[RMDB]
RNA sequence: GGGAACGACUCGAGUAGAGUCGAAAACCCCCAAGUUUCGACUUGGGGGAAUUAAAAUCAGCGCUAAAUAAUUAGCUCGCGUUACCGCUGAACGCGAGCAUAGAGCAAUGCGCUUCGGCGCAUUGAAUGUUUAUGUAGUGUUCGCACUACAUAAACAAAAAGAAACAACAACAACAAC
Reactivity to DMS in 0.01 (KOAc 150mM, MgCl2 10mM, bicine 150mM(pH8.5), 24C), signal-to-noise 3, nucleotides 027 to 126: c000c000c000c000c000a010a020g000u000u000u010c130g010a020c000u000u000g000g000g010g000g000a000a010u000u010a050a040a100a140u000c000a000g020c010g030c300u010a020a020a010u000a030a030u000u000a140g010c000u000c000g020c010g010u000u010a080c140c010g010c000u000g010a040a020c000g000c000g010a000g020c000a020u010a020g000a150g020c000a010a000u000g000c000g020c000u000u010c150g020g020c000g010c000a000u000u000g000a050a070
Reactivity to 2A3 in 0.01 (KOAc 150mM, MgCl2 10mM, bicine 150mM(pH8.5), 24C), signal-to-noise 3, nucleotides 027 to 126: c000c000c000c000c020a000a010g000u000u030u160c150g110a020c010u000u000g000g000g000g000g040a000a010u180u140a060a010a000a070u030c000a000g010c030g110c300u100a020a060a030u120a020a090u190u190a050g000c000u000c000g000c010g010u010u020a120c060c020g000c010u010g000a010a000c020g000c000g000a000g000c000a010u040a000g050a020g020c010a000a000u000g000c000g010c000u010u020c180g060g000c010g000c000a000u000u010g010a030a060